The record gives the reactivity of an RNA of 177 nucleotides to DMS and 2A3. Values are in units of 0.01, from 0 to 300, in steps of 10. The data come from the RNA Mapping Database (RMDB), library OK1LIB. DMS adducts were read by reverse transcription with MarathonRT. The reactions ran in a buffer of 150 mM KOAc, 10 mM MgCl2 and 150 mM bicine (pH 8.5), at 24 C. Values cover nucleotides 27 to 126.
RNA sequence: GGGAACGACUCGAGUAGAGUCGAAAAACAACCAAUGGAUAUGCUGGAGUUAAAACGAAUUUCCAAUUCAUCAGAAAGGAAGAUCCUAGAGCUUUACAAUUAGCCAAGGCACUGCGAGAUGUGCGUACGGAGUUAACUACUUCGGUAGUUAACUCCGAAAAGAAACAACAACAACAAC
Reactivity to DMS in 0.01 (KOAc 150mM, MgCl2 10mM, bicine 150mM(pH8.5), 24C), signal-to-noise 2, nucleotides 027 to 126: a080c050a170a250c000c040a090a170u030g000g000a040u000a050u080g000c110u020g000g020a060g000u000u000a100a030a030a050c180g000a030a060u010u000u000c010c030a050a140u000u000c060a160u080c220a010g020a170a020a270g010g020a020a040g050a080u010c010c040u000a100g000a050g000c020u020u020u000a050c210a140a150u050u000a040g020c010c020a030a040g000g000c050a010c020u000g000c150g020a170g000a110u020g000u030g010c030g030u000a030
Reactivity to 2A3 in 0.01 (KOAc 150mM, MgCl2 10mM, bicine 150mM(pH8.5), 24C), signal-to-noise 2, nucleotides 027 to 126: a000c100a060a040c050c000a080a090u100g030g020a100u080a060u300g040c140u080g060g000a140g030u130u150a020a090a100a050c040g040a050a040u010u150u000c010c020a040a130u100u080c030a050u030c020a020g160a130a060a000g060g020a070a000g030a050u020c030c020u060a050g030a010g070c010u070u180u130a220c120a100a290u090u070a010g010c060c060a070a070g130g000c000a000c010u010g010c010g060a010g010a100u170g010u020g000c010g000u000a050